[RMDB]
RNA sequence: GGGAACGACUCGAGUAGAGUCGAAAACGAUCGAUGCGCUCAACCGCGCCCUCGACAUGGGCGUCGAUAUCGUCGGCGGCAUCCCCCAUUUCGAGCGGACGAUGGGCGAAGGCACGGCGUCAGUCGAGGCGCUCUGCCGCAUCGCCGCCGAUCGCGGACUAUUCCUCUAGUUCGCUAGAGGAAUAGUAAAAGAAACAACAACAACAAC
Reactivity to 2A3 in 0.01 (KOAc 150mM, MgCl2 10mM, bicine 150mM(pH8.5), 24C), signal-to-noise 8, nucleotides 027 to 156: c020g020a030u080c010g020a030u080g020c020g020c040u050c060a080a130c110c020g020c040g030c070c010c010u010c010g020a030c010a060u050g010g010g050c010g010u020c010g010a030u060a110u180c200g040u010c000g010g010c000g030g040c040a300u210c020c000c000c000c000a010u020u030u030c020g010a020g020c170g010g030a050c010g030a060u060g000g010g030c060g030a070a070g010g000c010a000c050g000g020c010g000u020c010a100g150u170c090g120a190g000g000c000g000c000u030c010u020g000c010c010g000c010a030u020c020g010c010c000g000c010c020g040a050u060c070g010c030g030g000
Reactivity to DMS in 0.01 (KOAc 150mM, MgCl2 10mM, bicine 150mM(pH8.5), 24C), signal-to-noise 5, nucleotides 027 to 156: c020g000a040u000c020g010a050u000g020c040g030c020u000c030a140a090c090c080g020c020g000c010c010c010u000c030g010a100c090a080u000g020g000g010c020g000u000c020g020a060u000a070u000c120g020u000c020g020g020c030g020g010c080a130u020c040c090c020c000c020a120u000u000u000c050g010a070g030c050g040g010a110c020g010a040u000g000g010g020c050g010a080a080g020g030c000a060c060g010g020c000g010u000c020a120g030u000c170g000a170g000g020c000g010c020u000c080u000g030c010c000g020c040a080u000c040g010c030c000g010c010c010g000a020u000c000g010c040g030g010